The record gives the reactivity of an RNA of 177 nucleotides to 2A3 and DMS. The RNA was probed in 150 mM KOAc, 10 mM MgCl2 and 150 mM bicine (pH 8.5) at 24 C. The data come from the RNA Mapping Database (RMDB), library OK2TST. For DMS the reverse transcriptase was MarathonRT. The DMS profile rests on 2,328 reads.

RNA sequence: GGGAACGACUCGAGUAGAGUCGAAAAGGCACCGGUAGCCAUGUUGCGGGUGUACUGCUCAUGGCCGGGCGUGUCGGCGAUGAUGAACUUGCGCUUGGCGGUGCUGAAGUAGCGGUACGCCACGUCAUACCGCACCGAUAUUCGUAUCGGUGCGGUAAAAAGAAACAACAACAACAAC
Reactivity to 2A3 in 0.01 (KOAc 150mM, MgCl2 10mM, bicine 150mM(pH8.5), 24C), signal-to-noise 2, nucleotides 027 to 126: g020g050c020a010c040c020g060g110u160a020g030c000c000a040u060g040u050u100g080c020g000g090g010u130g060u170a080c000u030g000c000u010c010a020u020g050g000c000c000g000g010g010c040g010u000g060u080c020g020g020c060g060a120u160g030a050u120g020a100a100c040u090u160g000c010g000c010u010u010g100g000c040g090g040u070g000c040u060g010a080a020g040u140a010g000c000g020g000u020a010c000g000c020c050a060c030g030u030c000a050
Reactivity to DMS in 0.01 (KOAc 150mM, MgCl2 10mM, bicine 150mM(pH8.5), 24C), signal-to-noise 2, nucleotides 027 to 126: g010g000c020a040c040c030g010g030u010a100g020c010c040a100u000g000u010u010g040c020g000g010g020u010g020u000a100c050u010g010c030u000c010a030u010g030g020c000c020g000g000g020c050g000u000g010u000c040g010g010c020g000a100u010g010a110u010g000a070a070c020u000u020g000c000g040c020u010u000g000g000c000g010g000u010g020c090u000g010a100a070g040u010a030g000c010g000g000u000a030c030g010c000c000a050c080g000u010c100a180